Annotation
This 177-nucleotide RNA was probed chemically with 2A3 and DMS. The DMS profile rests on 1,959 reads. High DMS reactivity at an A or C suggests that its Watson-Crick edge is free. For 2A3, 3,222 sequencing reads were counted. The RNA was probed in 150 mM KOAc, 10 mM MgCl2 and 150 mM bicine (pH 8.5) at 24 C. Values cover nucleotides 27 to 126.
[RMDB]
RNA sequence: GGGAACGACUCGAGUAGAGUCGAAAAUGGAACGACGCCGGCGAGAGGGCCGCGAGCUCCGCCGUCCACCAGUCGGGCGGCGACCUCGUCGGGAACAGCACCUCGUUGCAGAUCCUGAGCGCGAUAGCCAUUGAAUGUUGUUCGCAACAUUCAAUGGAAAAGAAACAACAACAACAAC
Reactivity to 2A3 in 0.01 (KOAc 150mM, MgCl2 10mM, bicine 150mM(pH8.5), 24C), signal-to-noise 3, nucleotides 027 to 126: u040g030g000a090a020c000g200a060c020g020c030c000g000g000c010g030a170g020a090g110g140g000c010c000g100c020g020a040g000c020u090c070c020g000c000c000g000u020c010c000a070c020c040a060g240u220c100g000g000g010c000g000g000c000g000a010c010c000u000c010g030u010c010g000g000g010a050a000c020a020g040c000a040c010c070u100c060g090u090u070g010c000a010g020a140u040c000c000u030g020a040g030c040g000c020g060a100u150a030g040
Reactivity to DMS in 0.01 (KOAc 150mM, MgCl2 10mM, bicine 150mM(pH8.5), 24C), signal-to-noise 3, nucleotides 027 to 126: u020g000g000a070a100c030g000a090c090g020c010c030g010g000c020g020a140g010a300g030g000g010c020c010g000c070g000a130g020c020u000c050c010g020c000c010g000u000c000c010a150c120c170a150g010u020c160g010g010g000c000g000g000c000g010a070c300c000u000c020g020u000c000g000g000g000a040a060c100a060g000c080a050c030c170u000c130g000u000u000g010c020a100g010a100u000c010c000u000g000a070g000c060g000c030g000a140u000a070g000